RNA sequence: GGGAACGACUCGAGUAGAGUCGAAAAGAUGUAAUUAUAACGCCAUCCCAGAGUGAGGGAUGGGCCAGGAUGGGAGUGAGUCUCUAUCUACCGAUCCGUGUGAAGGAUGGGAGUGAGCGGCCCAUCCGCCGUCCUCCGAGAGACUCACUCUGUGGCGGAAUGGGCUUUGCUUCGGCAAAGCCCAUUCAAAAGAAACAACAACAACAAC
Reactivity to 2A3 in 0.01 (KOAc 150mM, MgCl2 10mM, bicine 150mM(pH8.5), 24C), signal-to-noise 1, nucleotides 027 to 156: g060a020u130g060u210a100a100u230u160a100u170a300a010c040g030c000c000a010u020c000c030c090a080g090a020g130u140g090a080g000g000g030a020u010g000g000g000c030c010a090g140g080a100u090g170g000g000a020g010u000g010a000g010u010c000u000c010u010a130u090c110u090a170c020c040g040a010u020c000c080g020u060g100u140g220a050a080g000g000a010u030g020g000g000a000g010u130g030a090g000c030g000g000c010c040c010a050u020c000c000g000c000c000g030u060c010c000u000c050c060g000a000g000a000g000a030c000u030c010a000c000u050c000u000g030u020g010g060c000g000